Structure probing data (2A3 and DMS) for a 207-nucleotide construct.
As a SHAPE reagent, 2A3 marks flexible, mostly unpaired nucleotides at the ribose 2'-OH.
For 2A3, 2,204 sequencing reads were counted.
Conditions: 150 mM KOAc, 10 mM MgCl2 and 150 mM bicine (pH 8.5), 24 C.
RNA sequence: GGGAACGACUCGAGUAGAGUCGAAAACGGGAACGAUCAUGAAAUUACAACCGGAAGCCUAAAGGGAUACGUAGUCAACCCGAUCGAUAUUGACGAAGAUCUGACAAUUCGUGUUGGGUCUGGCCCGGAUGACAUUUUAUUCCACCUUCGCAAAGUGCAUAGCACCAUGAUUCGUCAUGGUGCUAUGAAAAGAAACAACAACAACAAC
Reactivity to 2A3 in 0.01 (KOAc 150mM, MgCl2 10mM, bicine 150mM(pH8.5), 24C), signal-to-noise 3, nucleotides 027 to 156: c060g010g000g050a040a050c050g030a050u060c020a070u100g070a040a090a040u140u090a100c040a060a030c010c010g000g020a070a010g020c020c030u080a090a030a030g060g000g010a050u110a120c090g060u070a040g080u060c040a020a070c010c030c000g000a010u000c000g050a030u020a060u200u160g050a030c020g020a010a000g020a030u030c040u060g000a010c010a030a180u150u140c170g030u140g000u090u000g010g000g010u000c010u010g000g010c000c020c000g000g020a010u030g020a010c010a040u010u090u090u060a050u130u060c030c030a040c030c030u070u080c030g010c100a080a140a000g060u060g030
Reactivity to DMS in 0.01 (KOAc 150mM, MgCl2 10mM, bicine 150mM(pH8.5), 24C), signal-to-noise 4, nucleotides 027 to 156: c040g010g010g020a130a080c040g020a050u000c030a140u000g020a060a090a110u000u020a120c070a130a140c030c030g000g010a090a150g010c060c000u000a070a120a160g000g010g010a120u010a080c110g000u000a140g020u000c010a040a090c020c010c000g020a080u000c020g020a180u000a070u000u000g010a080c030g030a130a060g010a060u000c010u000g020a040c000a040a300u000u010c160g000u000g010u000u000g010g020g010u000c010u000g010g020c030c020c000g010g010a160u000g000a080c050a030u000u000u000u000a080u000u030c020c000a080c060c030u000u010c070g030c080a070a070a110g020u010g000